[RMDB]
RNA sequence: GGGAACGACUCGAGUAGAGUCGAAAAACCUCCCGGGCUCAUUACAUCCGCAUGAACUUCAACUUCACCUACCCGUCGAUGCCCUGCCAAGUGCUCAGCUUGGAUGCGACUGACAUGUCUGGGGAGAGAUGGAGUCACAAUUCGUUGUGACUCCAUCAAAAGAAACAACAACAACAAC
Reactivity to 2A3 in 0.01 (KOAc 150mM, MgCl2 10mM, bicine 150mM(pH8.5), 24C), signal-to-noise 2, nucleotides 027 to 126: a000c000c000u020c000c000c020g050g000g000c010u010c070a030u050u120a050c020a050u010c010c030g030c070a050u090g040a070a040c040u100u050c020a080a030c020u070u040c040a050c050c010u050a060c000c010c020g010u040c020g030a040u130g020c000c040c000u010g030c000c010a040a030g060u010g100c050u060c150a020g020c030u030u050g010g030a030u040g040c010g040a040c050u040g030a010c000a110u100g030u000c010u060g060g000g020g020a030g030a010
Reactivity to DMS in 0.01 (KOAc 150mM, MgCl2 10mM, bicine 150mM(pH8.5), 24C), signal-to-noise 2, nucleotides 027 to 126: a090c120c040u000c020c000c060g000g000g010c020u010c060a020u010u020a080c040a060u010c050c040g020c070a070u000g010a080a080c060u000u000c080a060a090c070u000u010c050a070c090c030u000a060c070c010c010g030u000c040g010a110u000g000c000c010c000u010g010c030c020a030a060g000u000g040c090u000c090a100g010c020u030u010g010g010a070u010g020c070g010a060c080u000g000a100c150a030u020g010u010c030u000g010g010g020g010a130g020a140